[RMDB]
RNA sequence: GGGAACGACUCGAGUAGAGUCGAAAAUUAACUAGCGUAGGGAACCAAGCAAAGAGGUAAGAAAUCCCACGGUAGAAGGCUUGGUUCGGGCCGGAGGAAGAAGAAGUCCCACUCCCUACGCCACAAACUACCUAAGAAACUUCGGUUUCUUAGGUAGAAAAGAAACAACAACAACAAC
Reactivity to 2A3 in 0.01 (KOAc 150mM, MgCl2 10mM, bicine 150mM(pH8.5), 24C), signal-to-noise 2, nucleotides 027 to 126: u130u040a050a050c070u030a050g000c000g000u000a000g010g000g000a030a010c010c000a000a020g000c030a030a100a130g170a080g090g070u160a170a080g060a130a140a060u080c010c010c010a030c010g060g000u080a100g010a210a030g080g000c020u010u010g000g000u020u100c040g000g010g020c040c000g020g040a070g090g020a100a060g030a080a000g020a020a010g050u050c000c010c010a030c010u000c020c020c010u000a000c000g010c000c000a010c020a010a040a020
Reactivity to DMS in 0.01 (KOAc 150mM, MgCl2 10mM, bicine 150mM(pH8.5), 24C), signal-to-noise 2, nucleotides 027 to 126: u000u020a110a120c110u010a090g010c010g010u010a030g000g000g020a070a030c020c030a030a030g030c030a070a110a100g010a100g010g010u010a060a050g030a120a060a120u000c020c000c030a160c140g030g010u000a110g010a110a080g000g020c010u000u010g010g000u000u000c140g000g010g020c050c030g020g050a110g000g000a060a080g000a110a090g000a130a120g010u010c000c000c010a130c300u000c010c000c010u000a000c020g010c000c080a000c120a070a100a140

Source: RMDB library M2PK90, as collected in RNAgym.
An RNA of 177 nucleotides, treated with 2A3 and DMS and read out base by base.
For DMS the reverse transcriptase was MarathonRT.
Conditions: 150 mM KOAc, 10 mM MgCl2 and 150 mM bicine (pH 8.5), 24 C.